[RMDB]
This 177-nucleotide RNA was probed chemically with 2A3 and DMS.
For 2A3, 148,825 sequencing reads were counted.
Conditions: 150 mM KOAc, 10 mM MgCl2 and 150 mM bicine (pH 8.5), 24 C.
The data come from the RNA Mapping Database (RMDB), library OK1LIB.
For DMS, 51,643 sequencing reads were counted.
RNA sequence: GGGAACGACUCGAGUAGAGUCGAAAAUAAGCUGACCAGCUAUGAGGUCAUACAUCGUCAUAGUGCUAAGAAGAGAGAUCUUCGAGGACAGAGAUGUCCAAGACGACGAGAACAUCGUCGUCGAUACGAUCUGGUCGAAUUUCGAUUUGACUAGAUCAAAAGAAACAACAACAACAAC
Reactivity to 2A3 in 0.01 (KOAc 150mM, MgCl2 10mM, bicine 150mM(pH8.5), 24C), signal-to-noise 9, nucleotides 027 to 126: u150a020a010g070c040u020g010a010c000c000a000g000c000u000a000u010g010a000g000g000u010c020a010u130a080c060a080u100c080g090u000c000a000u000a010g010u020g040c040u070a060a020g000a010a000g010a000g000a000g010a040u000c000u000u000c010g020a080g000g000a000c000a000g040a000g010a020u030g000u000c000c000a020a020g000a000c000g000a000c000g010a000g020a070a060c070a160u010c000g000u000c000g000u000c010g000a010u040a060c080
Reactivity to DMS in 0.01 (KOAc 150mM, MgCl2 10mM, bicine 150mM(pH8.5), 24C), signal-to-noise 9, nucleotides 027 to 126: u040a070a120g010c140u010g010a080c010c010a170g000c000u000a010u000g000a040g000g000u000c080a070u040a120c220a060u020c090g010u000c000a020u010a020g010u010g000c150u030a100a140g000a010a000g010a020g000a160g000a130u000c010u000u000c010g000a120g000g000a020c000a020g000a140g000a110u000g010u000c000c010a110a100g000a010c000g000a010c000g000a020g010a110a080c210a090u000c000g010u000c000g000u000c000g010a090u060a050c200